About this RNA: This 177-nucleotide RNA was probed chemically with DMS and 2A3. Source: RMDB library M2PK50, as collected in RNAgym. Reactivities are rounded to 0.1 and cut off at 0 and 3. DMS (dimethyl sulfate) methylates the pairing face of unpaired adenines and cytosines. For DMS the reverse transcriptase was MarathonRT. The reactions ran in a buffer of 150 mM KOAc, 10 mM MgCl2 and 150 mM bicine (pH 8.5), at 24 C.

RNA sequence: GGGAACGACUCGAGUAGAGUCGAAAAGGUCGGAGCUUCGGCUCCGACCAAAGCAGGAUUACCAAAUCCCAGCAAGCAGCAGCAGCAAGCAAGCAGCAAGGAAAACCAUUACGUUCGCGUAAUGGAACCUUAGACUCUUGUUCGCAAGAGUCUAAGGAAAAGAAACAACAACAACAAC
Reactivity to DMS in 0.01 (KOAc 150mM, MgCl2 10mM, bicine 150mM(pH8.5), 24C), signal-to-noise 2, nucleotides 027 to 126: g000g010u000c000g070g020a010g010c010u010u010c210g020g020c000u010c000c010g000a000c000c010a000a010a050g020c060a080g010g010a030u020u010a100c090c150a060a070a080u000c040c000c040a120g020c060a100a040g000c040a030g000c000a020g030c040a070g000c010a020a070g000c040a030a100g000c050a050g010c060a080a040g010g000a050a090a060a180c000c000a000u000u000a020c010g010u000u070c160g050c000g010u000a010a010u010g000g010a020a060
Reactivity to 2A3 in 0.01 (KOAc 150mM, MgCl2 10mM, bicine 150mM(pH8.5), 24C), signal-to-noise 1, nucleotides 027 to 126: g020g000u000c000g030g010a010g040c040u130u130c260g120g000c010u000c030c000g000a000c000c000a000a000a000g060c030a010g010g070a050u000u090a080c010c010a050a050a030u000c020c020c020a030g010c040a050a010g000c030a000g000c000a000g030c000a010g000c000a060a050g020c000a050a000g020c000a000g030c030a040a060g070g030a020a100a070a140c000c000a000u000u000a010c000g000u010u080c300g020c000g060u000a000a010u000g000g000a010a020